[RMDB]
RNA sequence: GGGAACGACUCGAGUAGAGUCGAAAACAUGAUGUGAAUGUUCUAUGAUAAGUUUUACUAAUGUAGUCAUCAGGUAAGAGUCAAGCUUUCUUCCAUAGAGCAGUCAGCUGUCGCAACACCAUUUGUUAAAUAGUCCGUCUGUUCUCCAUUGACUGAAUCAUGGAUAGCAAUUCGUUGCUAUCCAUGAAAAAGAAACAACAACAACAAC
Reactivity to 2A3 in 0.01 (KOAc 150mM, MgCl2 10mM, bicine 150mM(pH8.5), 24C), signal-to-noise 5, nucleotides 027 to 156: c040a040u120g010a050u080g080u030g150a110a040u040g010u060u000c020u040a040u050g030a050u020a070a030g000u020u030u040u070a050c060u070a050a160u130g040u090a080g100u080c070a140u060c100a090g080g070u070a120a040g040a010g130u040c030a040a000g010c020u070u090u060c020u100u010c090c000a020u010a030g020a000g010c030a010g040u050c010a000g020c040u050g030u090c050g010c070a020a060c030a040c030c040a060u040u020u140g050u030u090a090a120a080u050a040g040u020c020c020g010u010c050u030g030u050u010c050u000c030c020a070u070u130g050a080c090u050g040a040a040
Reactivity to DMS in 0.01 (KOAc 150mM, MgCl2 10mM, bicine 150mM(pH8.5), 24C), signal-to-noise 3, nucleotides 027 to 156: c040a110u010g010a120u000g020u000g020a090a100u000g020u000u000c030u000a040u000g060a130u000a030a080g020u000u010u000u010a090c060u000a090a090u000g010u000a130g010u010c060a090u000c060a120g000g060u000a040a110g000a080g020u000c070a050a120g010c050u000u000u000c050u010u010c100c020a070u000a060g010a090g010c010a090g020u000c030a080g010c030u020g010u000c030g020c030a090a080c040a080c090c050a070u000u000u010g010u010u000a050a040a070u000a050g010u010c010c040g000u000c010u010g030u000u000c030u000c020c040a130u000u000g010a100c050u000g000a140a210

Structure probing data (2A3 and DMS) for a 207-nucleotide construct. For 2A3, 3,202 sequencing reads were counted. Conditions: 150 mM KOAc, 10 mM MgCl2 and 150 mM bicine (pH 8.5), 24 C. For DMS, 6,807 sequencing reads were counted. The data come from the RNA Mapping Database (RMDB), library OK3TST. For 2A3 the reverse transcriptase was SuperScript II with manganese.